[RMDB]
RNA sequence: GGGAACGACUCGAGUAGAGUCGAAAAUCUAUGACUAACAGAAGCAUAUAAGCAUUCUCCAUUGGAGCAAAGGCUUUCUUUGGCUACAGCUAGGGCAAGCCGGCAAGUCAUCACAAAAAGGCAUGGAUAGACUCCAUUAGUUCGCUAAUGGAGUCUAAAAAGAAACAACAACAACAAC
Reactivity to 2A3 in 0.01 (KOAc 150mM, MgCl2 10mM, bicine 150mM(pH8.5), 24C), signal-to-noise 5, nucleotides 027 to 126: u000c000u030a040u060g080a070c040u060a210a020c050a090g090a130a000g050c040a040u140a030u070a240a020g010c030a090u100u030c030u000c050c000a220u060u280g070g020a030g020c040a030a140a030g010g000c000u020u040u030c030u040u050u030g020g010c030u130a120c080a100g020c000u030a040g010g000g000c030a010a000g030c000c040g010g000c010a020a010g040u010c020a010u040c060a040c100a100a090a050a040a030g060g010c020a040u080g010g030a020
Reactivity to DMS in 0.01 (KOAc 150mM, MgCl2 10mM, bicine 150mM(pH8.5), 24C), signal-to-noise 5, nucleotides 027 to 126: u020c010u000a040u000g000a090c010u030a100a130c180a070g010a100a090g000c030a080u020a090u030a120a150g000c040a110u020u000c000u000c040c020a140u040u040g000g010a090g030c090a060a140a080g000g020c020u010u000u000c010u000u000u000g000g000c000u050a060c280a170g010c020u010a020g020g000g000c040a030a040g010c010c000g010g020c070a060a060g000u000c020a050u020c140a100c150a050a050a040a060a080g010g020c060a030u000g000g000a220